[RMDB]
RNA sequence: GGGAACGACUCGAGUAGAGUCGAAAAUUGAUCAAACGUGGUUUGAUUGCUUUGACAGCUAGGAUGUUAGCUUGGAAGCAGCUAUUCAUUUAAAGAGUGCGUAACAGCUCACUAGUCGAGCGAUCGAUCCUAGUUAUUGCUUCGGCAAUAACUAGGAAAAAGAAACAACAACAACAAC
Reactivity to DMS in 0.01 (KOAc 150mM, MgCl2 10mM, bicine 150mM(pH8.5), 24C), signal-to-noise 3, nucleotides 027 to 126: u000u000g010a060u000c020a040a040a060c080g020u020g020g020u000u000u000g010a020u020u000g020c100u000u000u000g020a080c220a060g010c060u000a100g010g010a070u010g000u010u000a030g000c000u000u010g030g010a090a090g020c120a040g020c020u010a040u010u000c040a030u000u000u010a040a060a130g000a060g040u000g010c070g040u010a070a120c120a210g000c010u000c030a130c060u000a050g010u000c030g000a030g020c040g010a040u000c050g010a200
Reactivity to 2A3 in 0.01 (KOAc 150mM, MgCl2 10mM, bicine 150mM(pH8.5), 24C), signal-to-noise 2, nucleotides 027 to 126: u060u090g020a010u060c040a070a000a070c170g110u150g080g000u060u000u110g010a010u010u040g010c040u070u020u250g040a010c000a000g050c060u040a020g130g020a030u040g000u090u050a030g000c000u020u050g080g020a000a050g060c020a000g000c030u040a010u180u120c030a000u060u010u100a020a060a010g090a010g050u080g030c030g000u010a070a010c020a070g010c000u010c030a020c020u020a010g080u110c020g000a000g000c010g030a000u010c010g010a010
Structure probing data (DMS and 2A3) for a 177-nucleotide construct. For DMS the reverse transcriptase was MarathonRT. Source: RMDB library RFMREP, as collected in RNAgym. Reactivities are rounded to 0.1 and cut off at 0 and 3. The reactions ran in a buffer of 150 mM KOAc, 10 mM MgCl2 and 150 mM bicine (pH 8.5), at 24 C.